[RMDB]
RNA sequence: GGGAACGACUCGAGUAGAGUCGAAAAGAUAUGGACCAUUGUGGACAUGGCACUCGGAAACGAGUGUCCAACAGCCAUGUGGUCCUAAGUCAAAAGAUGGCAUUCGUGUUCGCACGAAUGCCAUCAAGUUCACGUGUUAGUUCGCUAACACGUGAACAAAAGAAACAACAACAACAAC
Reactivity to 2A3 in 0.01 (KOAc 150mM, MgCl2 10mM, bicine 150mM(pH8.5), 24C), signal-to-noise 1, nucleotides 027 to 126: g010a000u100a030u110g030g000a000c000c020a000u040u300g030u040g060g020a080c090a300u080g020g020c000a000c010u000c000g000g030a010a070a050c000g000a000g000u000g020u100c000c000a020a000c050a020g030c000c000a010u010g010u000g000g000u040c000c000u000a010a000g030u050c040a000a000a040a200g020a000u010g010g000c000a000u040u010c020g000u020g080u120u140c290g030c130a010c050g000a000a000u010g000c000c000a020u010c000a000a000
Reactivity to DMS in 0.01 (KOAc 150mM, MgCl2 10mM, bicine 150mM(pH8.5), 24C), signal-to-noise 2, nucleotides 027 to 126: g020a040u000a300u000g000g020a010c000c000a000u040u000g050u010g040g020a080c090a170u020g000g010c000a020c000u000c010g010g000a050a030a140c000g000a010g000u000g000u010c000c030a020a020c300a110g000c000c000a010u000g020u000g000g010u010c000c010u010a010a060g000u000c020a110a120a130a110g000a020u000g000g010c000a000u000u000c000g010u000g000u000u020c290g000c000a000c000g000a010a010u000g000c000c010a000u000c010a020a050
This 177-nucleotide RNA was probed chemically with 2A3 and DMS.
The data come from the RNA Mapping Database (RMDB), library TTRDEL.
DMS adducts were read by reverse transcription with MarathonRT.
Conditions: 150 mM KOAc, 10 mM MgCl2 and 150 mM bicine (pH 8.5), 24 C.